[RMDB]
The record gives the reactivity of an RNA of 177 nucleotides to 2A3 and DMS. The reactions ran in a buffer of 150 mM KOAc, 10 mM MgCl2 and 150 mM bicine (pH 8.5), at 24 C. It was measured as part of the RMDB library M2PK50. For 2A3, 1,331 sequencing reads were counted. DMS adducts were read by reverse transcription with MarathonRT. 2A3 adducts were read by reverse transcription with SuperScript II with manganese.

RNA sequence: GGGAACGACUCGAGUAGAGUCGAAAAUAGUCGGAAUUCGUUCCGACUAGAUGAACGCUGCAAGCGGCAGCGCGCUCAUAAGAGCACGCAAAAGCAACGCAAAAAUGAACUUAUUCGUAAGUUCAAAACGUAGUCCAGUUUUCGAACUGGACUACGUAAAAGAAACAACAACAACAAC
Reactivity to 2A3 in 0.01 (KOAc 150mM, MgCl2 10mM, bicine 150mM(pH8.5), 24C), signal-to-noise 1, nucleotides 027 to 126: u020a010g020u010c000g040g000a020a020u080u060c250g050u100u000c000c000g000a000c010u010a000g000a010u110g020a110a020c010g000c090u060g010c030a070a250g000c030g040g010c050a000g000c000g000c000g020c020u000c000a140u290a300a200g000a000g000c030a000c020g000c040a050a000a030a140g040c080a050a030c090g000c040a010a070a000a110a000u080g000a010a000c010u000u010a020u020u050c200g130u020a010a010g000u020u030c050a050a050a000
Reactivity to DMS in 0.01 (KOAc 150mM, MgCl2 10mM, bicine 150mM(pH8.5), 24C), signal-to-noise 2, nucleotides 027 to 126: u000a000g010u000c010g000g000a030a050u040u010c270g030u010u000c000c000g010a020c000u000a000g000a180u010g000a150a120c120g030c110u010g000c070a080a300g000c080g010g000c270a220g000c000g010c080g000c000u000c000a250u000a120a100g000a010g010c000a020c030g000c000a010a020a250a050g050c100a060a100c150g020c030a010a070a070a040a100u010g000a000a030c000u010u000a030u000u070c180g030u010a020a010g000u000u000c000a050a030a120